Conditions: 150 mM KOAc, 10 mM MgCl2 and 150 mM bicine (pH 8.5), 24 C. The record gives the reactivity of an RNA of 177 nucleotides to 2A3 and DMS. For 2A3, 954 sequencing reads were counted. High DMS reactivity at an A or C suggests that its Watson-Crick edge is free. For DMS, 752 sequencing reads were counted. Source: RMDB library OK2TST, as collected in RNAgym.

[RMDB]
RNA sequence: GGGAACGACUCGAGUAGAGUCGAAAAAUUUAGUCGCCGACGGCUACCUCGGGAUCGACGGCGACGGCUUCGGCACCGUGACGGCCGCAGACGGUUCCCGACGCCGUGCCUUUGCCACUGGCGACCGCAGCGCUAGUGAGUUCGCUCACUAGCGCUGAAAAGAAACAACAACAACAAC
Reactivity to 2A3 in 0.01 (KOAc 150mM, MgCl2 10mM, bicine 150mM(pH8.5), 24C), signal-to-noise 1, nucleotides 027 to 126: a000u130u150u120a000g010u000c020g010c020c000g060a050c050g000g040c040u040a140c000c010u070c060g110g060g000a120u140c060g090a050c090g000g000c050g020a000c000g010g020c010u050u030c020g020g000c060a030c060c000g000u050g250a150c110g120g040c040c110g020c040a000g010a080c010g030g020u030u110c050c000c000g000a040c020g030c000c020g000u000g020c010c000u130u140u120g020c010c030a100c180u110g010g000c010g010a020c000c000g000
Reactivity to DMS in 0.01 (KOAc 150mM, MgCl2 10mM, bicine 150mM(pH8.5), 24C), signal-to-noise 1, nucleotides 027 to 126: a090u010u000u000a070g000u010c040g040c010c000g010a070c190g010g000c020u010a060c220c020u010c020g020g000g010a040u010c070g010a130c230g000g000c030g020a000c010g000g000c030u000u000c030g010g000c300a090c030c030g060u020g050a150c070g020g000c010c110g040c050a190g010a100c000g020g000u000u010c140c000c010g010a020c110g030c000c000g020u000g000c000c010u000u000u000g010c030c010a100c140u000g010g030c000g010a010c000c260g030